[RMDB]
Source: RMDB library M2PK90, as collected in RNAgym. The record gives the reactivity of an RNA of 177 nucleotides to 2A3 and DMS. The reactions ran in a buffer of 150 mM KOAc, 10 mM MgCl2 and 150 mM bicine (pH 8.5), at 24 C. For DMS the reverse transcriptase was MarathonRT. The DMS profile rests on 2,518 reads.

RNA sequence: GGGAACGACUCGAGUAGAGUCGAAAAUUUUGGGCAGAUAACAACUGUUACGCGUCUUGCCACUGUAUUGUAAACACUACAACUAAUUUUAAGUUUAAUACACCUACGCGACAAGAUGAAUCGGAAAAGCUAGUAAAAAGUUCGCUUUUUACUAGCUAAAAGAAACAACAACAACAAC
Reactivity to 2A3 in 0.01 (KOAc 150mM, MgCl2 10mM, bicine 150mM(pH8.5), 24C), signal-to-noise 3, nucleotides 027 to 126: u110u090u060u080g040g030g000c020a000g020a050u070a150a000c030a040a020c040u030g020u050u090a100c110g000c000g000u000c000u000u070g000c020c020a020c050u050g000u010a030u030u040g090u040a010a070a030c020a030c070u170a030c080a190a040c100u110a110a300u070u100u070u180a090a070g000u000u000u050a050a070u020a020c030a010c000c040u030a020c060g000c020g050a060c000a010a030g000a030u050g040a060a100u150c040g010g000a080a140a000
Reactivity to DMS in 0.01 (KOAc 150mM, MgCl2 10mM, bicine 150mM(pH8.5), 24C), signal-to-noise 3, nucleotides 027 to 126: u000u000u010u000g030g010g010c020a040g010a060u010a090a100c150a070a110c070u000g010u000u020a100c130g030c060g000u000c010u010u000g000c010c020a080c090u000g010u010a020u010u000g010u020a030a070a130c110a060c170u000a090c180a020a060c090u040a040a150u010u010u000u010a050a050g010u000u000u000a060a120u000a040c030a030c160c090u000a040c070g030c030g000a040c040a040a020g000a030u000g000a060a080u010c080g010g000a070a070a070